[RMDB]
RNA sequence: GGGAACGACUCGAGUAGAGUCGAAAAGCUUCGGCGAGGAUUACGGCGUGACCAUCGCCGACGGGCCGAUGGCCGGGCUGCUCGCCCGCGCAAUCGUGGUGAUCGGCGCGGACGGCAACGUCGCCUACAGUUUUGGUGUAUUCGUACACCAAAACUGAAAAGAAACAACAACAACAAC
Reactivity to 2A3 in 0.01 (KOAc 150mM, MgCl2 10mM, bicine 150mM(pH8.5), 24C), signal-to-noise 2, nucleotides 027 to 126: g020c020u060u040c070g030g000c010g020a030g050g030a140u110u180a090c010g040g000c060g060u030g040a070c020c030a100u060c030g000c000c000g000a020c010g030g030g060c030c010g070a080u050g080g000c050c010g000g020g020c030u060g060c050u090c140g010c000c010c000g000c020g000c010a000a050u030c060g110u170g130g150u190g070a100u020c050g070g000c040g000c000g060g000a080c030g020g000c010a020a010c020g080u050c020g000c000c010u050a080
Reactivity to DMS in 0.01 (KOAc 150mM, MgCl2 10mM, bicine 150mM(pH8.5), 24C), signal-to-noise 3, nucleotides 027 to 126: g000c070u000u000c080g020g000c000g010a090g010g020a190u000u000a130c100g010g010c010g010u000g010a120c040c040a180u000c030g020c010c000g010a020c180g000g000g020c050c030g010a070u000g000g030c000c000g010g010g030c040u000g010c130u010c090g010c020c000c020g010c090g000c060a110a030u000c030g020u010g000g010u000g000a050u000c050g020g000c020g030c050g000g000a080c040g000g000c050a080a040c040g010u000c070g020c030c010u000a210
The record gives the reactivity of an RNA of 177 nucleotides to 2A3 and DMS. For 2A3 the reverse transcriptase was SuperScript II with manganese. The reactions ran in a buffer of 150 mM KOAc, 10 mM MgCl2 and 150 mM bicine (pH 8.5), at 24 C. For 2A3, 3,194 sequencing reads were counted. Reactivities are given for positions 27 through 126.